[RMDB]
RNA sequence: GGGAACGACUCGAGUAGAGUCGAAAACGACCUUCACGAGUGCGUGAAGGUCGAAGCGAGUGGUGACACUCGCAAGCACGUCAACUAUAAGCGCCCAUUAUAGUACAAACACAUAAAGCCCCGAUAUGUGUAGACGUGCAAGGGCGAACGGGGCAAACCUUUUAAUGAGUUUCGACUCAUUAAAAGGAAAAGAAACAACAACAACAAC
Reactivity to DMS in 0.01 (KOAc 150mM, MgCl2 10mM, bicine 150mM(pH8.5), 24C), signal-to-noise 1, nucleotides 027 to 156: c030g000a020c000c000u000u000c010a000c000g030a300g060u000g030c070g110u000g000a080a020g000g040u020c000g010a010a070g010c010g020a080g050u000g000g000u040g000a300c020a030c000u000c000g000c000a060a050g020c000a010c000g000u010c000a300a050c010u000a030u000a020a070g040c100g050c100c000c080a300u000u000a020u000a000g000u000a090c090a100a090a220c010a010c000a010u000a100a100a180g000c000c000c000c010g000a300u000a060u000g000u010g030u020a050g010a030c030g000u000g030c000a040a040g000g030g030c140g000a080a050c050g070g000g020g000c040a020a050a120
Reactivity to 2A3 in 0.01 (KOAc 150mM, MgCl2 10mM, bicine 150mM(pH8.5), 24C), signal-to-noise 5, nucleotides 027 to 156: c010g000a000c000c000u000u020c010a010c020g190a220g300u300g110c090g020u000g000a000a010g000g000u000c000g000a000a000g000c000g000a000g000u000g010g000u040g000a010c000a000c000u000c000g000c000a000a000g000c000a000c000g000u010c000a020a030c010u010a010u010a020a030g040c050g140c120c010c020a020u020u010a030u010a020g010u050a070c090a040a200a000c010a000c000a000u020a010a070a020g000c000c000c000c010g010a030u010a010u030g020u000g010u000a040g000a010c000g000u000g010c020a050a100g150g060g050c100g040a100a030c020g000g000g000g000c000a020a000a030